Conditions: 150 mM KOAc, 10 mM MgCl2 and 150 mM bicine (pH 8.5), 24 C. Structure probing data (DMS) for a 177-nucleotide construct. Reactivities are given for positions 27 through 126. Source: RMDB library TTRINS, as collected in RNAgym. The DMS profile rests on 2,868 reads.
RNA sequence: GGGAACGACUCGAGUAGAGUCGAAAAGAUAUGGACGCAGAGCUAACUGGAGCUGAGUAAAUUCUGGAUAGUCGGAAACGACUAUUAGACUAUAGCAGCGUUGAAAGUUAGCUCUGCGUCCUAAGUCGAUAACGAUUACGUUCGCGUAAUCGUUAUCAAAAGAAACAACAACAACAAC
Reactivity to DMS in 0.01 (KOAc 150mM, MgCl2 10mM, bicine 150mM(pH8.5), 24C), signal-to-noise 3, nucleotides 027 to 126: g010a090u010a300u000g010g020a000c010g030c020a010g000a020g020c000u000a000a020c010u000g010g000a080g040c000u000g010a060g020u000a070a160a200u010u000c000u010g000g010a000u000a000g000u000c000g010g000a100a110a280c010g030a020c000u000a000u000u000a010g010a050c180u010a160u020a110g020c000a010g000c020g020u000u020g000a140a130a020g000u000u000a010g000c020u000c000u000g000c000g000u000c000c010u000a000a070g000u000c120